[RMDB]
Description
This 177-nucleotide RNA was probed chemically with 2A3 and DMS. Values are in units of 0.01, from 0 to 300, in steps of 10. Reactivities are given for positions 27 through 126. For DMS, 8,183 sequencing reads were counted.

RNA sequence: GGGAACGACUCGAGUAGAGUCGAAAAUCUCGCAAGUUCGCUUGCGAGAGUAAUAAAUAAAAUGGGUUCAACUCCCCCGCUUUUCCGAGGGUAUCGGAAACCGUACAAACGGCUUCGGCCGUUUGAACAUCAUAGAAAUGUUCGCAUUUCUAUGAUGAAAAGAAACAACAACAACAAC
Reactivity to 2A3 in 0.01 (KOAc 150mM, MgCl2 10mM, bicine 150mM(pH8.5), 24C), signal-to-noise 5, nucleotides 027 to 126: u000c000u000c000g000c000a000a010g000u090u110c160g040c140u010u000g000c000g000a000g000a000g000u010a000a140u040a050a050a040u180a030a090a030a130u140g020g030g030u090u140c030a080a090c070u060c010c000c000c010c010g020c040u120u070u020u020c000c000g000a000g020g040g040u200a070u050c000g000g000a010a000a000c060c030g070u110a060c020a010a000a000c000g000g000c000u030u020c120g150g000c000c000g010u000u000u000g000a000a010
Reactivity to DMS in 0.01 (KOAc 150mM, MgCl2 10mM, bicine 150mM(pH8.5), 24C), signal-to-noise 6, nucleotides 027 to 126: u000c000u000c000g020c010a000a010g020u000u010c220g020c010u000u000g000c000g000a010g000a020g000u010a060a070u010a070a080a100u000a040a030a070a090u000g010g010g000u010u010c140a090a280c120u000c020c010c000c020c010g000c130u000u000u000u000c020c000g010a020g000g010g010u000a070u000c020g010g000a010a010a040c300c080g010u000a110c010a010a010a000c000g010g010c010u000u010c220g030g010c000c000g000u000u000u000g010a060a210
The data come from the RNA Mapping Database (RMDB), library M2PK50. 2A3 adducts were read by reverse transcription with SuperScript II with manganese.